[RMDB]
RNA sequence: GGGAACGACUCGAGUAGAGUCGAAAAGCUGCUUCUGAGAAGGAUGUCAUCAGUGUCUCUGGUCAGAUGCCUGGGCCUCAGGCUGGAGCCAUGGGCUGCCGGGGAGCUCACCUCUCCUGUCUCCACACGCUCCCCAGGCCUGCGGCUGGUGAAACAGCAGUGAUCCAGUAUUCGUACUGGAUCACUGAAAAGAAACAACAACAACAAC
Reactivity to 2A3 in 0.01 (KOAc 150mM, MgCl2 10mM, bicine 150mM(pH8.5), 24C), signal-to-noise 2, nucleotides 027 to 156: g040c030u000g000c010u110u020c000u090g130a090g070a110a050g010g040a010u060g070u070c020a100u000c040a080g060u030g100u060c010u000c020u100g090g000u040c090a040g030a120u110g040c020c010u090g020g040g020c000c030u080c010a060g010g000c030u060g030g040a010g000c030c030a120u090g000g000g060c060u070g070c070c060g000g010g020g010a010g020c070u070c080a110c030c020u020c020u060c000c040u050g090u040c020u000c070c020a080c010a010c070g000c000u010c000c000c000c020a040g060g000c000c010u030g010c030g020g000c000u000g010g040u040g030a110a090a000c020a010g070
Reactivity to DMS in 0.01 (KOAc 150mM, MgCl2 10mM, bicine 150mM(pH8.5), 24C), signal-to-noise 1, nucleotides 027 to 156: g040c040u020g020c010u010u000c040u020g000a140g010a180a090g030g020a080u020g020u040c020a080u010c060a090g050u010g000u000c010u020c040u010g000g040u000c060a110g000a050u000g000c020c000u010g030g020g000c050c000u000c010a030g010g000c000u000g010g040a050g030c110c300a060u030g010g020g050c010u000g040c100c160g020g060g020g020a020g000c080u000c120a110c140c000u010c000u000c020c010u010g010u010c000u000c000c010a050c140a090c140g040c010u010c030c000c000c030a090g000g000c030c030u000g030c100g010g060c020u010g000g080u000g010a100a070a070c040a120g030